[RMDB]
RNA sequence: GGGAACGACUCGAGUAGAGUCGAAAAGAUAUGGAAUCCUUGUAGGGAGCUUCUAUUCGGAAACGAAUAGGAAGCAUCGAUCUAUGGGAUUCCUAAGUCAAAACUUGGUACCUUCGGGUACCAAGAACAUCUUAUUUAACUUCGGUUAAAUAAGAUGAAAAGAAACAACAACAACAAC
Reactivity to DMS in 0.01 (KOAc 150mM, MgCl2 10mM, bicine 150mM(pH8.5), 24C), signal-to-noise 5, nucleotides 027 to 126: g000a030u000a080u020g000g000a030a010u000c000c000u010u020g050u000a010g010g020g010a140g010c000u000u000c000u000a010u000u000c000g010g000a040a010a050c000g010a010a010u000a020g020g010a020a020g030c000a150u010c260g010a110u010c000u000a010u000g000g000g000a010u000u000c010c000u000a000a060g000u000c000a120a070a090a210c010u000u000g000g010u000a000c000c000u000u020c300g040g010g030u000a010c000c000a000a010g000a100a230
Reactivity to 2A3 in 0.01 (KOAc 150mM, MgCl2 10mM, bicine 150mM(pH8.5), 24C), signal-to-noise 4, nucleotides 027 to 126: g000a010u020a000u070g000g000a010a000u000c020c040u130u300g040u050a040g010g120g160a110g010c000u020u000c000u010a000u000u000c000g000g000a020a020a000c000g010a010a010u040a050g150g080a030a010g000c010a020u290c180g080a070u000c010u010a020u030g020g000g000a000u000u000c000c000u000a000a000g000u000c010a020a010a170a290c010u010u000g010g010u000a010c000c000u020u050c300g090g000g000u010a000c000c000a000a000g000a000a000

The record gives the reactivity of an RNA of 177 nucleotides to DMS and 2A3. The data come from the RNA Mapping Database (RMDB), library TTRDES. DMS adducts were read by reverse transcription with MarathonRT. For 2A3 the reverse transcriptase was SuperScript II with manganese. Conditions: 150 mM KOAc, 10 mM MgCl2 and 150 mM bicine (pH 8.5), 24 C.